[RMDB]
RNA sequence: GGGAACGACUCGAGUAGAGUCGAAAAAAUCCGAGCAGCACCGGACCAAAGUCGCAUGUUUCGGGGUCAACGAACGCGUCGUGGUUGUGUUGGAAAGCCCAUUGGACAGCAUCAUCGACAAGGCCGAGCAUGGAGAUUUCUUCGGAAAUCUCCAUGCAAAAGAAACAACAACAACAAC
Reactivity to DMS in 0.01 (KOAc 150mM, MgCl2 10mM, bicine 150mM(pH8.5), 24C), signal-to-noise 1, nucleotides 027 to 126: a080a110u000c000c040g030a140g010c180a150g000c020a150c080c030g020g000a060c000c130a120a060a100g020u010c020g020c290a060u050g020u000u000u000c000g000g000g020g000u000c000a000a070c010g000a020a040c020g000c210g050u010c000g030u000g020g000u010u000g020u040g060u000u000g000g000a060a210a080g020c000c000c030a020u030u000g000g000a100c140a040g000c010a040u010c050a050u020c000g000a020c100a050a200g000g000c000c000g000a080
Reactivity to 2A3 in 0.01 (KOAc 150mM, MgCl2 10mM, bicine 150mM(pH8.5), 24C), signal-to-noise 1, nucleotides 027 to 126: a000a020u000c020c010g010a000g000c020a000g000c010a000c050c000g060g030a060c000c050a100a130a000g040u030c000g020c030a050u080g050u030u090u050c030g040g020g000g000u050c040a020a050c030g030a030a010c020g010c040g040u090c060g050u070g060g010u030u010g030u030g000u000u060g070g040a050a070a000g040c000c000c040a080u060u140g140g030a030c010a050g000c010a020u000c040a040u030c030g050a050c050a080a080g070g010c000c050g010a010

Chemical mapping of a 177-nucleotide RNA with DMS and 2A3. Conditions: 150 mM KOAc, 10 mM MgCl2 and 150 mM bicine (pH 8.5), 24 C. For 2A3, 911 sequencing reads were counted. 2A3 adducts were read by reverse transcription with SuperScript II with manganese.